Description: Conditions: 150 mM KOAc, 10 mM MgCl2 and 150 mM bicine (pH 8.5), 24 C. Structure probing data (DMS) for a 177-nucleotide construct. For DMS, 2,829 sequencing reads were counted. Reactivities are given for positions 27 through 126.
[RMDB]
RNA sequence: GGGAACGACUCGAGUAGAGUCGAAAAGAUAUGGAGUGCGGGAGCGUCAUGGGAUCUCUGCAUGGCUAUUCGGAAACGAAUAGCCAUGCAGAUCUCCCACUAGACGCGAAGAACGCACUCCUAAGUCCCUAAACAUAGGGUUCGCCCUAUGUUUAGGAAAAGAAACAACAACAACAAC
Reactivity to DMS in 0.01 (KOAc 150mM, MgCl2 10mM, bicine 150mM(pH8.5), 24C), signal-to-noise 2, nucleotides 027 to 126: g020a080u000a300u000g000g000a020g000u000g000c010g000g000g000a090g040c000g010u000c000a200u000g030g010g020a010u000c290u020c010u010g000c020a020u000g010g000c000u010a040u010u000c000g010g000a150a120a300c000g000a010a010u000a010g010c000c000a000u000g010c010a000g010a000u010c170u010c000c000c000a010c300u010a150g010a000c010g020c000g010a060a120g000a120a180c000g000c010a010c000u000c000c000u000a000a140g010u010c040